[RMDB]
RNA sequence: GGGAACGACUCGAGUAGAGUCGAAAACGCUGGGUACAUCAAUGAUGGAGCUACCCACCAGCUCUGAAGCGCGCACGGAGCUGAGGCUCUUGAGGGGUACCUGUGCUGAAGCGCGCACGGCAACCGAAAGGUGCGUCACGGUCUGUUCGCAGACCAAGUCUUGACAUAGGUUCGCCUAUGUCAAGACAAAAGAAACAACAACAACAAC
Reactivity to DMS in 0.01 (KOAc 150mM, MgCl2 10mM, bicine 150mM(pH8.5), 24C), signal-to-noise 1, nucleotides 027 to 156: c100g000c000u000g020g050g010u000a020c030a160u000c080a160a080u000g010a200u010g010g030a070g000c000u000a060c020c010c000a300c060c010a010g010c020u000c000u010g010a000a120g000c000g010c010g130c030a300c000g010g000a010g010c000u010g000a220g000g010c030u000c000u000u000g060a180g030g000g040g050u010a020c000c020u000g000u000g000c010u020g020a060a060g050c010g000c050g100c010a280c030g060g000c080a150a150c060c010g090a150a100a300g000g020u010g000c130g060u000c010a100c160g000g010u010c000u010g020u020u020c270g000c030a010g000a000c000c020a000a300
Reactivity to 2A3 in 0.01 (KOAc 150mM, MgCl2 10mM, bicine 150mM(pH8.5), 24C), signal-to-noise 3, nucleotides 027 to 156: c040g000c020u040g000g030g010u020a010c020a190u170c080a260a300u180g020a040u110g040g010a000g000c010u050a140c030c020c010a030c020c010a010g000c000u000c020u040g080a150a030g030c000g000c000g000c010a020c020g010g000a000g020c000u000g010a010g020g000c000u010c000u040u060g090a080g020g120g020g010u010a000c010c010u040g040u050g000c010u090g020a170a030g010c000g000c000g000c000a010c000g040g010c020a040a040c010c010g010a070a040a040g040g010u040g020c020g040u070c080a060c210g000g000u000c000u000g020u080u120c180g000c100a010g000a000c010c000a000a000
Chemical mapping of a 207-nucleotide RNA with DMS and 2A3. 2A3 is a SHAPE reagent: it acylates the 2'-hydroxyl of flexible nucleotides of all four kinds. The reactions ran in a buffer of 150 mM KOAc, 10 mM MgCl2 and 150 mM bicine (pH 8.5), at 24 C. The 2A3 profile rests on 3,883 reads. 2A3 adducts were read by reverse transcription with SuperScript II with manganese.